Structure probing data (2A3 and DMS) for a 177-nucleotide construct.
High DMS reactivity at an A or C suggests that its Watson-Crick edge is free.
Reactivities are given for positions 27 through 126.
For DMS, 939 sequencing reads were counted.

RNA sequence: GGGAACGACUCGAGUAGAGUCGAAAAAUUACAAAAUCUUCGGAUUAAUUUUAGCAGUUUGCAUCGAUGUCUAAAAUUAGAAUGGAAAAUCGGUCAUAUCGAUAUUCGGUGUAUGGAAAUAAACGGACAGCUCAUGAUCAUUCGUGAUCAUGAGCUGAAAAGAAACAACAACAACAAC
Reactivity to 2A3 in 0.01 (KOAc 150mM, MgCl2 10mM, bicine 150mM(pH8.5), 24C), signal-to-noise 2, nucleotides 027 to 126: a000u170u050a000c000a040a230a000a000u010c040u090u120c030g040g000a040u060u000a030a000u010u010u000u010a000g000c000a030g030u030u100u190g000c000a000u030c060g040a030u000g260u000c020u160a010a010a010a010u130u090a110g200a150a060u250g090g230a060a200a000a000u040c040g010g040u080c000a060u020a010u300c000g000a000u000a070u070u040c000g000g010u000g000u000a060u130g000g040a120a000a000u000a050a100a120c160g060g190a000
Reactivity to DMS in 0.01 (KOAc 150mM, MgCl2 10mM, bicine 150mM(pH8.5), 24C), signal-to-noise 1, nucleotides 027 to 126: a000u100u000a010c050a100a020a040a020u000c050u000u000c180g000g020a280u060u000a030a130u000u000u000u000a070g020c050a020g050u000u000u000g000c100a000u000c070g000a110u000g000u010c000u000a000a000a090a010u000u000a000g020a120a200u000g000g010a010a040a220a100u000c020g010g000u030c070a090u060a130u060c050g000a020u000a100u040u000c020g010g000u000g000u010a020u030g000g090a000a040a230u010a070a020a110c070g000g000a170